The data come from the RNA Mapping Database (RMDB), library 15KLIB. Chemical mapping of a 170-nucleotide RNA with DMS and 2A3. The RNA was probed in 150 mM KOAc, 10 mM MgCl2 and 150 mM bicine (pH 8.5) at 24 C. 2A3 adducts were read by reverse transcription with SuperScript II with manganese. For DMS, 107,621 sequencing reads were counted.

RNA sequence: GGGAACGACUCGAGUAGAGUCGAAAAUGUGCUCCUGCCUCUCCUUGUCGGUGAACCCCCUGGCCUUGGGUUUCCUCCCAGGUCCGAAAUCAACCUCCAUGGUUUCCUGCCUGGGCCUCUUCGCCGGAACGACGUAACUUCGGUUACGUCAAAAGAAACAACAACAACAAC
Reactivity to DMS in 0.01 (KOAc 150mM, MgCl2 10mM, bicine 150mM(pH8.5), 24C), signal-to-noise 9, nucleotides 027 to 129: u060g010u020g010c010u000c040c000u010g030c030c020u000c010u030c030c040u020u030g040u040c090g030g000u020g000a040a130c050c020c010c020c020u020g010g000c050c030u000u020g010g000g000u010u010u000c070c050u030c000c000c000a040g010g000u000c110c230g020a030a030a030u030c080a030a110c090c040u040c050c040a190u000g000g010u020u010u010c020c060u000g030c030c010u000g000g000g010c060c030u000c050u020u020c080g030c050c030g020g040a080a080c150
Reactivity to 2A3 in 0.01 (KOAc 150mM, MgCl2 10mM, bicine 150mM(pH8.5), 24C), signal-to-noise 9, nucleotides 027 to 129: u140g020u060g030c010u010c000c000u020g050c010c010u020c000u020c010c010u040u080g080u100c040g030g010u060g080a080a070c000c000c000c000c020u020g020g000c000c010u030u080g020g000g000u050u050u030c010c020u050c000c000c010a000g000g010u000c020c010g020a010a010a010u050c020a020a220c010c030u030c030c020a050u050g030g000u010u030u020c010c010u010g020c000c010u010g000g010g000c000c000u040c000u040u040c030g020c020c010g040g020a050a040c080